An RNA of 207 nucleotides, treated with 2A3 and read out base by base. Values cover nucleotides 27 to 156. The RNA was probed in 150 mM KOAc, 10 mM MgCl2 and 150 mM bicine (pH 8.5) at 24 C.
RNA sequence: GGGAACGACUCGAGUAGAGUCGAAAAGACGUUCGACCCGGACAAGUACAGUGCGGUCAAGAUUAAGUUUGAGCCGCAGCCAGGCAUGAAGCGAGUCACUGCGAGCAUUUUUAGCACGGGCAAGGUGAUUGUGACGGGUGCAAGGACACUUGACGAGCGAUCUAGGUUUGUUCGCAAACCUAGAUCGAAAAGAAACAACAACAACAAC
Reactivity to 2A3 in 0.01 (KOAc 150mM, MgCl2 10mM, bicine 150mM(pH8.5), 24C), signal-to-noise 1, nucleotides 027 to 156: g010a000c080g000u000u020c070g060a100c020c050c000g100g020a120c010a000a000g000u070a060c020a020g060u030g060c040g000g010u000c050a030a000g080a100u200u240a240a110g240u190u040u040g000a000g020c000c000g000c000a000g000c000c000a060g020g140c040a040u120g070a000a000g050c000g000a000g040u000c000a010c020u060g000c020g060a020g020c060a060u000u070u100u190u200a090g000c020a000c100g000g040g030c030a040a040g090g020u000g040a070u100u150g030u040g080a030c020g000g050g000u060g020c020a000a060g020g020a000c020a030c090u070u110g060a040c010g010a000g000